Chemical mapping of a 177-nucleotide RNA with DMS and 2A3. For 2A3, 774 sequencing reads were counted. For DMS, 1,857 sequencing reads were counted. Source: RMDB library OK2TRN, as collected in RNAgym.

RNA sequence: GGGAACGACUCGAGUAGAGUCGAAAAUGGACGAGACAUUUGAGGAUGUGCACGUUUCUGAUAAGUCAAUGAUCUGGAAUUCUGAUCUCGUAGAAACUCUGGAAUUGCAAAAUUUACUUACUUGUGCGUCUUAAAGGCUUUUCGAAGCCUUUAAGACAAAAGAAACAACAACAACAAC
Reactivity to DMS in 0.01 (KOAc 150mM, MgCl2 10mM, bicine 150mM(pH8.5), 24C), signal-to-noise 2, nucleotides 027 to 126: u000g030g000a080c010g000a080g000a040c010a030u010u000u000g010a140g020g010a100u010g020u000g010c040a120c110g010u010u000u000c030u030g000a100u000a030a050g020u000c080a050a060u000g010a100u000c060u000g000g020a070a070u010u000c020u000g000a120u000c010u010c050g020u010a110g010a100a060a080c190u010c060u000g020g010a010a080u010u010g010c100a030a040a090a040u000u000u000a030c050u000u000a060c080u010u000g010u030g020c160
Reactivity to 2A3 in 0.01 (KOAc 150mM, MgCl2 10mM, bicine 150mM(pH8.5), 24C), signal-to-noise 1, nucleotides 027 to 126: u050g000g020a030c000g000a010g000a020c060a030u020u050u150g100a110g110g090a070u020g050u070g100c050a010c080g070u010u140u090c030u040g150a080u030a190a000g000u020c030a020a100u010g010a070u000c010u010g030g030a090a100u030u020c020u040g020a030u050c010u000c010g000u020a030g150a180a210a030c070u000c030u080g080g010a020a120u030u070g000c010a060a010a020a100u090u000u050a110c030u060u000a030c030u060u050g080u030g000c020